This 207-nucleotide RNA was probed chemically with 2A3.
Source: RMDB library M2RFPK, as collected in RNAgym.
The reactions ran in a buffer of 150 mM KOAc, 10 mM MgCl2 and 150 mM bicine (pH 8.5), at 24 C.

[RMDB]
RNA sequence: GGGAACGACUCGAGUAGAGUCGAAAAAUCUUUAAGCAGAUGGCAGGUUCACCGCGUACGGUGCGGAAGUUCGCGCUUCCGUGAAACGCGAAAAUCGGACGGUGGCUGCAAGUCGCAUCGCAAAACCUAUAGCUUGUUAGGUUCGCCUAACAAGCAAUCGCUGAAUUAACUUCGGUUAAUUCAGCGAAAAAGAAACAACAACAACAAC
Reactivity to 2A3 in 0.01 (KOAc 150mM, MgCl2 10mM, bicine 150mM(pH8.5), 24C), signal-to-noise 1, nucleotides 027 to 156: a000u050c040u020u110u130a050a000g000c080a080g020a010u020g050g010c000a000g090g050u190u160c010a010c010c000g010c020g020u030a020c050g020g070u040g030c010g000g000a010a010g020u070u180c080g020c050g000c160u000u020c000c010g000u030g020a080a040a000c130g020c000g010a070a020a020a130u110c010g060g000a060c000g020g070u020g000g040c010u010g040c000a030a030g120u080c080g080c080a020u080c060g000c080a070a080a000a040c010c010u110a090u090a210g000c000u000u000g000u010u030a030g010g000u000u070c160g050c060c000u000a000a010c000a020a000g000c000a010a000